RNA sequence: GGGAACGACUCGAGUAGAGUCGAAAAGACUCUUACAAAGGGAAAGUUGUAUGAGUAUGGUUCUUACUUUCCCACUAUUGGACAUUUAAGAACCUUAGUUGCUAUUGCGUCCAAUAGAUAGCAACUGGCAGAGCUGACUAUUCGUAGUCAGUUCUGCAAAAGAAACAACAACAACAAC
Reactivity to DMS in 0.01 (KOAc 150mM, MgCl2 10mM, bicine 150mM(pH8.5), 24C), signal-to-noise 9, nucleotides 027 to 126: g000a040c000u000c000u000u000a010c010a010a040a140g010g010g000a060a070a080g010u000u000g000u000a020u000g000a030g010u000a050u010g010g020u000u000c010u010u010a090c130u000u000u000c010c000c030a210c160u000a040u000u000g000g000a030c020a160u000u010u000a060a040g010a050a040c080c070u010u000a020g010u000u000g000c000u000a020u000u000g010c130g000u000c010c010a020a040u000a080g000a020u000a010g000c010a010a000c010u000g020
Reactivity to 2A3 in 0.01 (KOAc 150mM, MgCl2 10mM, bicine 150mM(pH8.5), 24C), signal-to-noise 6, nucleotides 027 to 126: g000a000c000u000c000u010u020a000c000a010a030a020g070g020g030a040a050a030g020u010u010g010u010a040u090g000a000g000u030a060u110g070g020u020u000c010u020u020a030c010u010u010u000c000c000c010a010c010u030a050u010u040g000g010a000c020a040u080u080u090a080a020g020a020a010c000c000u000u000a000g000u000u010g000c000u010a010u020u080g040c030g020u000c000c000a020a010u040a050g030a000u000a000g000c000a000a000c000u000g060
Conditions: 150 mM KOAc, 10 mM MgCl2 and 150 mM bicine (pH 8.5), 24 C. An RNA of 177 nucleotides, treated with DMS and 2A3 and read out base by base. For 2A3 the reverse transcriptase was SuperScript II with manganese. It was measured as part of the RMDB library OK2TRN.